[RMDB]
RNA sequence: GGGAACGACUCGAGUAGAGUCGAAAAGCACAGCCAUACAGCCUCCACUCAAUAUGACCUAGAAUGCCUGAAAUAAAUGAUUGUGAGUCUUUGUGUAUUGCCAGCGUUCGACGUCAGCCAUAGUAGCUAAUACUACCACCUUCGGGUGGUAGUAUUAAAAAGAAACAACAACAACAAC
Reactivity to 2A3 in 0.01 (KOAc 150mM, MgCl2 10mM, bicine 150mM(pH8.5), 24C), signal-to-noise 2, nucleotides 027 to 126: g000c000a000c010a060g040c030c010a120u110a120c050a020g020c000c000u030c040c010a070c020u000c000a040a030u150a110u180g030a050c000c000u000a030g040a150a000u020g140c010c020u060g060a040a050a000u180a010a110a090u090g040a080u170u050g090u070g190a080g110u050c000u140u090u110g110u020g020u030a060u040u180g070c030c000a000g070c000g070u090u020c010g000a020c010g040u010c010a000g060c030c010a080u090a100g020u020a000g090c030
Reactivity to DMS in 0.01 (KOAc 150mM, MgCl2 10mM, bicine 150mM(pH8.5), 24C), signal-to-noise 4, nucleotides 027 to 126: g010c070a040c080a100g010c040c040a080u000a100c090a070g020c050c020u000c030c010a080c060u000c070a050a090u010a080u010g010a050c010c020u010a160g000a050a050u010g020c070c020u010g010a170a070a050u010a060a040a060u010g010a070u010u010g010u000g010a130g000u000c020u000u010u020g010u000g020u020a050u000u000g010c050c030a060g020c050g010u000u000c020g000a080c280g010u000c040a050g010c020c060a050u000a100g010u010a060g020c090

Structure probing data (2A3 and DMS) for a 177-nucleotide construct. The RNA was probed in 150 mM KOAc, 10 mM MgCl2 and 150 mM bicine (pH 8.5) at 24 C. The DMS profile rests on 4,151 reads. For 2A3 the reverse transcriptase was SuperScript II with manganese.